Source information
The record gives the reactivity of an RNA of 207 nucleotides to 2A3. Reactivities are rounded to 0.1 and cut off at 0 and 3. Reactivities are given for positions 27 through 156. The reactions ran in a buffer of 150 mM KOAc, 10 mM MgCl2 and 150 mM bicine (pH 8.5), at 24 C. For 2A3 the reverse transcriptase was SuperScript II with manganese. For 2A3, 1,299 sequencing reads were counted.
RNA sequence: GGGAACGACUCGAGUAGAGUCGAAAACGAUCUGUUCGCAGAUCGAGCUACGGAGACGUAGCAAAGAACGUGAGGAGCCGCACACGUUCCAAACAAGAAAUAAGGGCCUAUCCGGCCAGCCGAGGAUAGGCGCGGCUCCGAAGAAACCGGCUGGCAACGUAUUUAGCAGGUUCGCCUGCUAAAUACGAAAAGAAACAACAACAACAAC
Reactivity to 2A3 in 0.01 (KOAc 150mM, MgCl2 10mM, bicine 150mM(pH8.5), 24C), signal-to-noise 2, nucleotides 027 to 156: c010g000a000u010c000u000g030u030u090c260g010c080a000g000a000u000c000g000a020g010c010u000a000c000g000g050a130g030a070c010g000u000a000g000c000a000a000a030g000a030a000c040g020u030g030a050g000g010a000g010c010c010g050c010a050c010a010c100g030u000u010c050c020a060a240a090c080a060a070g140a190a080a030u220a080a100g030g110g030c030c000u020a000u000c000c020g020g010c010c000a000g000c000c010g020a010g010g000a000u000a000g000g000c010g000c010g000g020c010u000c010c020g030a090a070g060a040a050a010c060c000g000g000c000u000g000g010c030a030a020